[RMDB]
Structure probing data (2A3 and DMS) for a 207-nucleotide construct. 2A3 adducts were read by reverse transcription with SuperScript II with manganese. For DMS the reverse transcriptase was MarathonRT. Reactivities are rounded to 0.1 and cut off at 0 and 3. The reactions ran in a buffer of 150 mM KOAc, 10 mM MgCl2 and 150 mM bicine (pH 8.5), at 24 C.
RNA sequence: GGGAACGACUCGAGUAGAGUCGAAAAACUCUCACCAGUUAAGGUACUGUAACUGAUCCUCGAGGACUAGUGUCCGAGACUCAGGACACGAGUCUCUCUAGUACUGAACUAGAAGUAGUCCUGGAGUACAGUACCGUACUCCAGCGAGCGUGGGAGACCAUAGUAGGCACUUCGGUGCCUACUAUGGAAAAGAAACAACAACAACAAC
Reactivity to 2A3 in 0.01 (KOAc 150mM, MgCl2 10mM, bicine 150mM(pH8.5), 24C), signal-to-noise 2, nucleotides 027 to 156: a000c000u000c000u000c000a000c030c000a010g010u070u060a190a030g000g000u010a000c010u050g060u100a160a110c030u070g120a240u050c020c000u020c050g090a020g000g010a010c010u000a070g060u000g060u080c040c050g030a020g040a070c080u050c040a050g000g060a060c020a020c050g090a090g030u000c030u000c000u010c020u010a000g000u050a090c070u100g140a150a010c000u000a010g000a060a040g090u060a010g010u000c020c000u060g010g010a010g000u000a010c000a030g060u080a010c000c000g010u000a000c010u000c040c050a040g010c020g080a050g040c110g010u000g000g020g000a000g020a000
Reactivity to DMS in 0.01 (KOAc 150mM, MgCl2 10mM, bicine 150mM(pH8.5), 24C), signal-to-noise 1, nucleotides 027 to 156: a090c010u000c010u010c000a080c020c000a050g010u000u010a020a090g000g000u000a010c000u000g000u000a060a210c100u000g000a160u020c090c000u000c050g000a160g010g020a050c010u000a090g020u010g000u010c010c020g050a080g010a090c070u010c000a220g000g000a110c040a070c060g000a050g000u000c020u000c020u030c010u000a000g030u010a300c080u010g000a130a080c000u000a030g020a060a130g000u000a090g000u000c020c080u010g000g000a110g010u000a060c000a070g010u010a010c030c030g000u000a020c050u010c000c030a070g010c030g000a100g020c020g040u010g000g000g010a070g000a200